[RMDB]
RNA sequence: GGGAACGACUCGAGUAGAGUCGAAAAGUCGAAUUCAAUUUUACUGCAAACCUCAGCAUCCUGCAAUAUACCUUUGUAACAAACUUGCACAUAUAACCCUGGAAUCCAAAAUAAAAGUUGAAAACUAAGUUUUCCAGUUAGACAACUUUGGUAAAGCACACGCAUAGCAGUUCGCUGCUAUGCGUGUAAAAGAAACAACAACAACAAC
Reactivity to 2A3 in 0.01 (KOAc 150mM, MgCl2 10mM, bicine 150mM(pH8.5), 24C), signal-to-noise 1, nucleotides 027 to 156: g060u060c020g020a000a070u250u050c010a040a060u120u140u090u140a070c050u040g030c010a130a040a130c010c000u060c000a000g000c000a000u060c020c000u090g080c040a060a040u040a000u010a080c030c000u110u070u050g110u080a050a070c000a090a230a010c050u050u130g010c050a000c050a010u150a000u060a000a110c000c000c000u020g000g070a020a020u000c020c020a010a120a120a000u140a000a160a120a000g010u100u150g050a030a030a010a000c020u020a000a020g040u000u000u060u130c040c000a000g060u150u110a090g060a100c060a030a000c060u080u100u080g050g000u050a000a000a280g020c080

This 207-nucleotide RNA was probed chemically with 2A3. The reactions ran in a buffer of 150 mM KOAc, 10 mM MgCl2 and 150 mM bicine (pH 8.5), at 24 C. Values are in units of 0.01, from 0 to 300, in steps of 10. For 2A3, 332 sequencing reads were counted.